[RMDB]
RNA sequence: GGGAACGACUCGAGUAGAGUCGAAAAUAGCUUGGUACCUAGCACUAAGGCAGUCAAAAUGUUUCUCAAAUGAGUGAUCGAUUGGGUCUCUAUAGUGUACCCAUGGCAAGGAGAUUUUAAGCAAUUUUUUGUAAGGGUGGCCAGCAGGACAGAAGCCCCUCCUGGUAUUGUUCGCAAUACCAGGAGGAAAAGAAACAACAACAACAAC
Reactivity to 2A3 in 0.01 (KOAc 150mM, MgCl2 10mM, bicine 150mM(pH8.5), 24C), signal-to-noise 1, nucleotides 027 to 156: u050a000g060c040u010u130g070g000u070a070c030c000u000a030g120c020a000c080u100a050a120g020g000c040a030g040u110c070a100a000a000a040u130g020u020u040u000c040u000c020a120a170a100u230g000a040g150u050g020a070u100c020g060a070u010u100g030g000g000u000c000u010c030u210a120u080a150g060u060g020u060a000c060c000c050a000u070g020g000c000a000a030g030g000a100g000a010u000u150u000u130a080a020g050c010a060a060u040u010u110u090u080u140g060u030a100a150g020g030g030u030g000g040c010c000a010g030c000a000g000g000a000c030a060g090a100a020g140c090c130

Source: RMDB library OK3TST, as collected in RNAgym. An RNA of 207 nucleotides, treated with 2A3 and read out base by base. 2A3 adducts were read by reverse transcription with SuperScript II with manganese. The RNA was probed in 150 mM KOAc, 10 mM MgCl2 and 150 mM bicine (pH 8.5) at 24 C.